Structure probing data (DMS) for a 177-nucleotide construct. It was measured as part of the RMDB library M2PK90. DMS adducts were read by reverse transcription with MarathonRT. The reactions ran in a buffer of 150 mM KOAc, 10 mM MgCl2 and 150 mM bicine (pH 8.5), at 24 C.

[RMDB]
RNA sequence: GGGAACGACUCGAGUAGAGUCGAAAAUUGUGGUCAAGACCUUGGCGUAGUAUCCAAGGUUGUGAAGGUUCCUAUUGACUUAACAAUGAUUGAGUUUAUGUUAUGGUGUAAGGAUGGACAGGGGAAAGGUUUUACACACCUUCGGGUGUGUAAAACCAAAAGAAACAACAACAACAAC
Reactivity to DMS in 0.01 (KOAc 150mM, MgCl2 10mM, bicine 150mM(pH8.5), 24C), signal-to-noise 1, nucleotides 027 to 126: u010u010g040u000g010g000u000c030a060a120g000a060c000c000u010u000g000g000c220g010u000a130g000u020a090u020c030c000a010a020g000g020u000u000g010u000g000a100a150g010g000u000u000c010c010u000a110u000u000g030a020c010u000u000a030a040c030a050a070u000g020a110u000u010g000a050g010u000u000u000a070u000g020u000u000a050u000g010g020u010g000u010a060a060g020g020a090u010g010g000a070c080a060g000g000g000g000a040a040a040